[RMDB]
RNA sequence: GGGAACGACUCGAGUAGAGUCGAAAAUAAGGGAAGAUUACGAGACUAAUACACACUAAUACUCUGAGGUGCUCAGUAAACAUAUUUGCAUGGGGUGUGGCCACCAUCUUGAUUUGAAUUCCCGUUGAGCCUAGGCUUUGUUCGCAAAGCCUAGGCUAAAAGAAACAACAACAACAAC
Reactivity to DMS in 0.01 (KOAc 150mM, MgCl2 10mM, bicine 150mM(pH8.5), 24C), signal-to-noise 1, nucleotides 027 to 126: u000a000a050g030g000g000a150a050g000a160u000u050a010c040g090a090g000a100c000u000a140a170u070a090c260a060c100a000c040u000a050a040u000a110c090u000c100u000g000a200g040g080u040g000c050u000c100a010g000u010a000a110a190c190a000u000a060u000u000u000g060c190a090u000g000g040g050g110u000g000u000g000g000c050c000a000c230c150a070u000c040u000u000g000a040u050u000u000g010a080a110u000u000c000c000c000g150u050u010g000
Reactivity to 2A3 in 0.01 (KOAc 150mM, MgCl2 10mM, bicine 150mM(pH8.5), 24C), signal-to-noise 2, nucleotides 027 to 126: u160a060a080g180g000g000a040a040g160a180u050u000a100c050g110a000g040a020c000u290a160a000u130a040c000a000c000a000c070u180a090a090u000a120c010u010c030u050g040a000g140g040u220g100c000u000c050a030g000u050a090a240a000c120a130u180a170u260u070u300g070c100a090u010g000g000g000g220u020g010u030g000g070c000c000a000c000c000a060u050c000u300u000g220a300u000u070u040g120a180a090u000u000c000c000c000g000u000u080g010
This 177-nucleotide RNA was probed chemically with DMS and 2A3. It was measured as part of the RMDB library OK1LIB. For 2A3, 445 sequencing reads were counted. The RNA was probed in 150 mM KOAc, 10 mM MgCl2 and 150 mM bicine (pH 8.5) at 24 C.